Description: An RNA of 177 nucleotides, treated with 2A3 and DMS and read out base by base. The RNA was probed in 150 mM KOAc, 10 mM MgCl2 and 150 mM bicine (pH 8.5) at 24 C. 2A3 is a SHAPE reagent: it acylates the 2'-hydroxyl of flexible nucleotides of all four kinds. For 2A3, 1,967 sequencing reads were counted.
RNA sequence: GGGAACGACUCGAGUAGAGUCGAAAAGUUCACUAGUGCAUACAUUGAUAUUUAAGUGGUGUUCCGUCACUGCUUAUUGUGGAAGCAACGUUCUGUCGUUGUGGAAACCAAUAACUGCUAACCAUGUAGUAAAUUGAUGGUUCGCCAUCAAUUUACUAAAAGAAACAACAACAACAAC
Reactivity to 2A3 in 0.01 (KOAc 150mM, MgCl2 10mM, bicine 150mM(pH8.5), 24C), signal-to-noise 3, nucleotides 027 to 126: g070u110u130c050a020c140u090a040g150u050g120c020a050u030a130c030a020u030u020g040a030u110a120u300u090u010a010a000g000u020g010g020u030g000u150u260c080c050g140u200c020a010c020u010g010c010u060u000a010u020u060g010u010g010g010a010a000g000c010a000a000c000g040u090u150c130u260g260u290c010g010u010u010g020u020g030g000a000a000a000c010c010a030a020u020a060a050c080u050g000c010u040a040a030c040c000a110u120g050u120
Reactivity to DMS in 0.01 (KOAc 150mM, MgCl2 10mM, bicine 150mM(pH8.5), 24C), signal-to-noise 2, nucleotides 027 to 126: g000u010u010c030a100c050u010a140g010u000g010c060a060u000a130c280a060u000u000g000a200u040a050u000u010u040a040a030g040u000g000g030u020g010u000u010c160c110g010u020c000a050c020u000g020c050u000u010a010u010u020g020u040g000g040a300a120g000c010a010a000c040g040u000u030c260u010g020u020c000g020u020u000g020u000g000g000a270a150a020c040c100a030a000u000a020a160c180u000g010c040u000a150a120c060c110a050u020g000u020